[RMDB]
RNA sequence: GGGAACGACUCGAGUAGAGUCGAAAAGAUAUGGAGCUCUCGCCUAGGGAGAUCAUCGGAAACGAUCGAUCAUCGAUCUAGGAAACGAGCUCCUAAGUCAAAAGCGACUUUGUUCGCAAAGUCGCAAGAGUUUGUUAAAGUUCGCUUUAACAAACUCAAAAGAAACAACAACAACAAC
Reactivity to 2A3 in 0.01 (KOAc 150mM, MgCl2 10mM, bicine 150mM(pH8.5), 24C), signal-to-noise 2, nucleotides 027 to 126: g010a020u090a040u190g000g000a010g020c010u020c020u030c090g050c060c000u000a020g010g040g000a040g010a010u000c000a010u000c000g010g020a130a090a090c090g030a080u140c140g010a000u000c010a070u300c040g050a030u030c010u020a000g010g000a060a130a010c050g000a000g000c000u000c000c000u000a010a020g020u000c030a030a030a080a110g000c000g000a000c000u000u010u030g040u030u070c090g010c150a000a000a000g000u000c000g000c040a000a000
Reactivity to DMS in 0.01 (KOAc 150mM, MgCl2 10mM, bicine 150mM(pH8.5), 24C), signal-to-noise 3, nucleotides 027 to 126: g000a040u010a300u020g000g010a000g020c000u000c000u010c300g010c010c000u000a000g000g000g000a080g010a010u000c020a000u010c000g000g000a090a090a180c030g000a010u000c150g020a010u000c040a300u010c150g000a090u010c010u000a020g000g000a090a060a050c230g000a010g000c010u010c000c000u000a000a030g010u000c030a070a070a130a180g000c000g010a010c000u000u000u000g010u010u010c230g010c010a000a000a020g000u000c000g000c010a030a040